Source information:
An RNA of 177 nucleotides, treated with 2A3 and DMS and read out base by base.

[RMDB]
RNA sequence: GGGAACGACUCGAGUAGAGUCGAAAACAGCCGCACCCUGGACGACAGAACCGUGCCCUACGAGUGCUUGUCGGGCGGGGCCAAAGAACAGCUUGGCAUCCUGGCGCGAUUGGCCGGCGCGGCGCUGGCAGCCAGUGAGAUUCGUCUCACUGGCUGCAAAAGAAACAACAACAACAAC
Reactivity to 2A3 in 0.01 (KOAc 150mM, MgCl2 10mM, bicine 150mM(pH8.5), 24C), signal-to-noise 1, nucleotides 027 to 126: c010a020g060c000c000g010c030a030c040c020c020u030g060g090a070c060g020a030c030a010g040a070a010c000c000g020u030g000c000c010c020u130a120c050g040a040g110u200g010c000u080u050g020u000c000g000g130g020c010g030g000g000g000c010c020a110a100a010g090a150a060c070a110g050c070u050u050g020g000c030a120u180c000c010u090g230g000c190g010c000g050a040u050u040g020g000c030c000g000g020c000g030c000g010g010c080g030c040u040g110
Reactivity to DMS in 0.01 (KOAc 150mM, MgCl2 10mM, bicine 150mM(pH8.5), 24C), signal-to-noise 1, nucleotides 027 to 126: c070a180g030c030c080g000c070a130c040c020c040u000g030g010a120c070g010a220c010a000g020a060a070c030c000g060u000g000c000c030c110u000a050c130g000a020g030u000g030c060u010u000g010u000c000g010g030g040c000g000g040g000g000c000c020a000a010a120g010a140a170c160a190g000c070u040u000g010g020c010a130u010c010c000u010g010g000c070g000c010g000a100u000u000g000g020c000c000g000g000c050g020c020g010g010c220g000c080u000g000
The RNA was probed in 150 mM KOAc, 10 mM MgCl2 and 150 mM bicine (pH 8.5) at 24 C.